Chemical mapping of a 177-nucleotide RNA with 2A3 and DMS. The RNA was probed in 150 mM KOAc, 10 mM MgCl2 and 150 mM bicine (pH 8.5) at 24 C. For 2A3, 5,170 sequencing reads were counted.

[RMDB]
RNA sequence: GGGAACGACUCGAGUAGAGUCGAAAAUGUGGAGGAGGCCUCUGUGGAUUCUUGGCCUUGGCAGGUCAGCAUCCAGUACGACAAACAGCACGUCUGUGGAGGGAGCAUCCUGGACCCCCACUGGGUCUCCCAAUUAUACGUUCGCGUAUAAUUGGGAAAAAGAAACAACAACAACAAC
Reactivity to 2A3 in 0.01 (KOAc 150mM, MgCl2 10mM, bicine 150mM(pH8.5), 24C), signal-to-noise 4, nucleotides 027 to 126: u110g000u050g040g040a020g020g000a010g000g030c030c000u030c030u040g070u040g060g010a020u060u010c040u130u150g010g000c020c010u020u030g140g040c130a010g000g000u020c000a000g000c010a010u010c010c000a020g090u090a060c100g050a020c050a040a170a010c020a050g060c060a030c190g060u050c050u040g030u040g020g030a040g030g000g000a060g030c010a030u040c000c010u010g020g060a080c010c000c010c020c010a070c060u060g070g040g000u030c030
Reactivity to DMS in 0.01 (KOAc 150mM, MgCl2 10mM, bicine 150mM(pH8.5), 24C), signal-to-noise 8, nucleotides 027 to 126: u010g010u010g010g010a070g010g010a050g010g010c040c020u010c040u000g030u000g000g000a040u000u000c030u010u010g030g010c010c010u010u010g020g010c280a070g000g000u000c020a030g010c240a030u000c010c010a050g000u010a070c160g010a080c120a090a110a070c090a060g010c090a110c180g000u000c030u000g020u000g010g010a110g000g000g000a070g010c050a070u000c020c020u000g000g010a150c020c010c010c050c050a050c090u000g010g010g000u010c060